[RMDB]
RNA sequence: GGGAACGACUCGAGUAGAGUCGAAAAGUAUGUCAGACAAAAACGUCAAAACAAAGAGUGUUGCGUAGAAUAUGACGUUCACGGCCAGGUUUUGAGUGUCGAGGAAGAAUUGCCAUGGUCCCCCUGGGACCCAUGGUACGUUCGCGUACCAUGGGUCAAAAGAAACAACAACAACAAC
Reactivity to 2A3 in 0.01 (KOAc 150mM, MgCl2 10mM, bicine 150mM(pH8.5), 24C), signal-to-noise 4, nucleotides 027 to 126: g080u040a060u130g070u050c030a020g030a150c080a030a190a020a030a010c040g080u040c050a010a030a000a080c070a040a140a030g150a040g030u050g040u130u150g030c010g030u050a030g130a190a070u190a100u270g050a010c020g010u030u030c040a030c020g070g000c050c000a040g000g070u040u070u080u110g080a090g040u100g010u060c040g000a020g040g040a060a060g040a080a100u100u070g010c010c000a040u050g050g030u050c020c000c000c010c010u020g010g070
Reactivity to DMS in 0.01 (KOAc 150mM, MgCl2 10mM, bicine 150mM(pH8.5), 24C), signal-to-noise 6, nucleotides 027 to 126: g020u010a030u010g020u000c040a100g020a170c070a050a070a080a060a030c060g010u000c010a020a040a050a050c100a070a100a100g010a150g020u000g000u010u000g000c060g020u010a060g000a120a140u010a100u000g010a020c030g010u000u000c040a080c100g010g000c040c070a100g010g000u000u000u000u000g010a040g020u000g020u000c050g010a150g000g010a100a050g010a050a060u000u000g020c030c020a020u000g000g010u000c010c010c010c090c090u000g000g010